Annotation:
Structure probing data (DMS) for a 177-nucleotide construct. Values cover nucleotides 27 to 126. DMS adducts were read by reverse transcription with MarathonRT. The reactions ran in a buffer of 150 mM KOAc, 10 mM MgCl2 and 150 mM bicine (pH 8.5), at 24 C. It was measured as part of the RMDB library TTRINS. For DMS, 3,191 sequencing reads were counted.
RNA sequence: GGGAACGACUCGAGUAGAGUCGAAAAGAUAUGGAAUGUUCAUGUUGCAGCGCAAAGGUAGCAGCGUAUCGGAAACGAUACGACCUGCUAUAAUCUUUGCGCUGCAACAUGAGACAUUCCUAAGUCACUCUGAAGAUAACUUCGGUUAUCUUCAGAGAAAAGAAACAACAACAACAAC
Reactivity to DMS in 0.01 (KOAc 150mM, MgCl2 10mM, bicine 150mM(pH8.5), 24C), signal-to-noise 2, nucleotides 027 to 126: g020a070u000a300u000g000g000a020a010u000g020u000u000c000a000u000g000u000u000g000c000a010g000c020g000c000a010a030a010g060g010u000a000g020c010a000g000c000g030u000a000u010c000g010g010a160a090a250c010g010a010u000a000c030g010a140c300c020u000g000c020u000a050u010a300a080u020c010u010u000u000g010c000g010c000u010g010c000a000a000c000a000u000g010a070g000a030c000a010u000u000c000c000u000a020a050g010u010c080a220